[RMDB]
RNA sequence: GGGAACGACUCGAGUAGAGUCGAAAAUGUUGAUAAGUCAGUGGAUGAUUGCAGGAUAUUCCAUCAGUUAUCAGCAGUUGUACCACUGAUUUGUUAAUGACUACUUCGUCAGGUUCGCCUGACGAAGCCUAUAAUGGUUGUUCGCAACCAUUAUAGGAAAAGAAACAACAACAACAAC
Reactivity to DMS in 0.01 (KOAc 150mM, MgCl2 10mM, bicine 150mM(pH8.5), 24C), signal-to-noise 9, nucleotides 027 to 126: u020g010u000u000g000a020u000a010a010g010u000c010a020g020u000g000g010a120u000g000a020u000u000g010c010a170g010g010a020u000a020u010u010c090c150a140u010c240a140g000u000u000a010u000c000a100g000c000a010g010u000u010g010u000a150c010c000a020c020u000g000a010u000u000u000g010u000u000a010a020u000g000a120c120u000a300c010u000u000c000g000u000c000a010g000g000u000u010c260g020c010c000u000g000a000c010g000a000a000g010
Reactivity to 2A3 in 0.01 (KOAc 150mM, MgCl2 10mM, bicine 150mM(pH8.5), 24C), signal-to-noise 9, nucleotides 027 to 126: u130g000u010u020g000a000u000a010a010g010u000c010a000g000u000g010g010a020u020g010a010u020u020g010c030a060g170g050a010u020a030u120u140c120c070a190u140c080a120g050u040u020a010u010c000a000g000c000a000g000u000u020g070u120a300c000c000a010c000u010g000a000u000u010u000g000u010u010a010a010u040g060a040c030u050a040c000u090u000c000g000u000c000a000g030g010u020u050c180g040c070c010u000g000a000c000g000a000a000g010